[RMDB]
RNA sequence: GGGAACGACUCGAGUAGAGUCGAAAAGCGUACUACGACCUUUUGACGUCGGAUGGUCGAGGUUUCUCCCAAAUAGGAGAAACCUAAGACAGCCAUGCGACGAUAAGGUCGUAUCGCAAAACCGAAUUGCAAGGGUUUCGACCCUUGCAAUUCGGAAGAGAGAAGUAAGUUUCGACUUACUUCUCUCAAAAGAAACAACAACAACAAC
Reactivity to DMS in 0.01 (KOAc 150mM, MgCl2 10mM, bicine 150mM(pH8.5), 24C), signal-to-noise 1, nucleotides 027 to 156: g040c010g060u010a050c090u000a010c000g000a000c000c000u000u010u000u000g000a160c140g020u000c000g000g000a050u000g030g030u010c100g020a040g000g000u010u000u010c010u000c020c000c030a030a100a220u000a040g000g020a050g000a010a000a030c000c000u000a010a070g000a170c300a080g020c000c010a020u000g030c000g000a040c020g000a060u000a060a010g000g030u020c010g000u000a000u010c000g020c030a100a060a140a170c000c000g000a040a000u000u000g000c000a030a000g010g010g000u000u000u000c260g000a020c010c040c000u000u010g000c000a000a010u000u010c000g000g030a010a090
Reactivity to 2A3 in 0.01 (KOAc 150mM, MgCl2 10mM, bicine 150mM(pH8.5), 24C), signal-to-noise 4, nucleotides 027 to 156: g010c010g060u110a110c070u000a010c050g000a000c000c000u050u050u060u130g250a130c030g000u000c010g040g130a000u000g000g020u130c020g000a020g000g020u010u000u000c030u040c020c020c030a180a300a100u300a080g000g000a000g000a000a000a000c000c000u010a020a000g030a020c040a000g040c020c000a020u130g080c010g000a000c000g040a030u010a050a020g000g010u010c000g000u000a000u030c000g000c020a050a030a010a060c010c000g000a010a000u000u000g000c000a000a000g050g000g040u030u120u210c240g160a100c000c010c000u000u000g010c000a000a000u000u000c000g000g000a000a000
Notes:
An RNA of 207 nucleotides, treated with DMS and 2A3 and read out base by base. For 2A3, 3,829 sequencing reads were counted. DMS (dimethyl sulfate) methylates the pairing face of unpaired adenines and cytosines. For 2A3 the reverse transcriptase was SuperScript II with manganese. DMS adducts were read by reverse transcription with MarathonRT. Conditions: 150 mM KOAc, 10 mM MgCl2 and 150 mM bicine (pH 8.5), 24 C. It was measured as part of the RMDB library RNAMAK.